[RMDB]
RNA sequence: GGGAACGACUCGAGUAGAGUCGAAAAGGACAACGUCACAAUGGUGGUCAUUGGCACGUUGGUGUGGGGCGCAGCGGUCGGAAUACAAGAGUCCACGCUGCGCGGCGUGGUGGCCGACCUGGUCGCCGUAUUACCCAGACUUCGGUCUGGGUAAUACAAAAGAAACAACAACAACAAC
Reactivity to 2A3 in 0.01 (KOAc 150mM, MgCl2 10mM, bicine 150mM(pH8.5), 24C), signal-to-noise 3, nucleotides 027 to 126: g120g030a020c010a010a000c020g010u020c040a000c000a130a050u030g040g040u200g120g150u300c010a010u010u000g020g000c100a000c050g000u010u010g040g020u030g040u070g040g100g060g010c010g000c010a040g000c010g030g100u160c100g010g060a070a030u210a180c130a140a090g040a040g240u010c000c000a010c000g000c010u020g010c000g000c000g010g020c010g050u070g000g000u010g020g000c010c010g060a220c020c070u030g000g020u030c000g000c010c010
Reactivity to DMS in 0.01 (KOAc 150mM, MgCl2 10mM, bicine 150mM(pH8.5), 24C), signal-to-noise 4, nucleotides 027 to 126: g010g020a170c000a000a000c030g020u010c180a160c000a020a030u010g010g010u020g030g000u010c010a040u000u000g000g020c190a020c020g020u000u010g010g010u010g030u010g020g020g000g030c030g010c000a030g000c030g010g010u020c130g020g000a070a060u000a130c290a100a140g020a160g000u010c000c010a030c000g000c010u000g010c060g020c040g000g000c070g000u010g010g010u000g010g000c020c000g010a120c110c050u000g010g020u000c010g020c020c010
This 177-nucleotide RNA was probed chemically with 2A3 and DMS. Reactivities are rounded to 0.1 and cut off at 0 and 3. Conditions: 150 mM KOAc, 10 mM MgCl2 and 150 mM bicine (pH 8.5), 24 C. DMS adducts were read by reverse transcription with MarathonRT. For 2A3, 3,067 sequencing reads were counted.